[RMDB]
RNA sequence: GGGAACGACUCGAGUAGAGUCGAAAACAAUUUUCAACUUUUCACCUUCCCUUGAAACUUGAAUUUUCCUACAAUCAAACUACCUCCUAUAAAAUCCAAUCCUCUACUUUACCAAUCCGAAAAUAAACUACAUAAGUAUGUUCGCAUACUUAUGUAGAAAAGAAACAACAACAACAAC
Reactivity to 2A3 in 0.01 (KOAc 150mM, MgCl2 10mM, bicine 150mM(pH8.5), 24C), signal-to-noise 1, nucleotides 027 to 126: c000a020a020u030u050u040u130c080a040a070c020u070u080u050u070c030a030c000c000u000u030c000c000c000u000u020g020a040a050a000c000u000u000g030a040a080u080u020u090u000c000c000u030a080c080a080a150u070c030a050a180a090c010u050a080c030c010u030c000c010u050a040u050a180a100a020a050u010c010c000a010a000u020c010c000u040c010u010a020c010u040u000u020a060c030c000a010a030u030c000c000g070a010a020a070a100u110a080a090a030
Reactivity to DMS in 0.01 (KOAc 150mM, MgCl2 10mM, bicine 150mM(pH8.5), 24C), signal-to-noise 2, nucleotides 027 to 126: c060a040a030u000u000u000u000c020a030a030c060u010u000u000u000c090a050c090c040u000u000c000c010c000u000u000g000a040a060a010c230u000u000g020a100a060u000u010u010u000c000c000u000a060c150a080a090u010c080a080a070a100c080u000a050c050c020u000c020c020u010a080u000a060a060a090a060u010c060c050a020a070u000c010c000u000c010u000a040c020u000u000u010a110c010c010a040a090u010c060c020g010a070a070a030a100u010a060a080a130